[RMDB]
RNA sequence: GGGAACGACUCGAGUAGAGUCGAAAACGCCAAAUGGCGGUGGGUCACGGGGGCACUCUGAUUACAGAGUGACUUUGGGUGCUCCUGCUCUGAACACCAGGUCGGUUGGCAGCAGAGGUGUCAACUAGUGAGUAUACCCUUUCGAGGGUAUACUCACAAAAGAAACAACAACAACAAC
Reactivity to DMS in 0.01 (KOAc 150mM, MgCl2 10mM, bicine 150mM(pH8.5), 24C), signal-to-noise 2, nucleotides 027 to 126: c100g020c000c020a060a110a060u010g020g010c040g020g000u000g000g000g010u010c050a100c040g030g010g000g000g000c010a010c000u010c000u000g010a160u010u010a080c040a130g000a240g010u000g000a010c060u000u000u000g010g000g040u010g000c010u000c010c000u000g000c150u000c090u010g000a120a040c040a050c040c000a070g000g030u010c050g010g000u010u010g000g020c020a050g000c040a170g010a140g030g010u000g010u000c050a030a040c060u000a130
Reactivity to 2A3 in 0.01 (KOAc 150mM, MgCl2 10mM, bicine 150mM(pH8.5), 24C), signal-to-noise 2, nucleotides 027 to 126: c040g000c000c000a030a160a100u280g000g000c020g000g000u010g000g070g050u080c020a010c040g000g000g000g010g010c000a000c000u010c020u020g030a040u010u060a050c020a040g260a020g250u120g040a060c010u060u040u020g020g000g000u020g000c000u000c000c000u000g000c060u060c040u080g070a040a030c010a050c010c010a040g150g000u050c040g020g000u020u000g020g030c000a000g040c030a020g060a030g170g000u030g040u040c010a010a010c030u040a050
Chemical mapping of a 177-nucleotide RNA with DMS and 2A3. For DMS the reverse transcriptase was MarathonRT.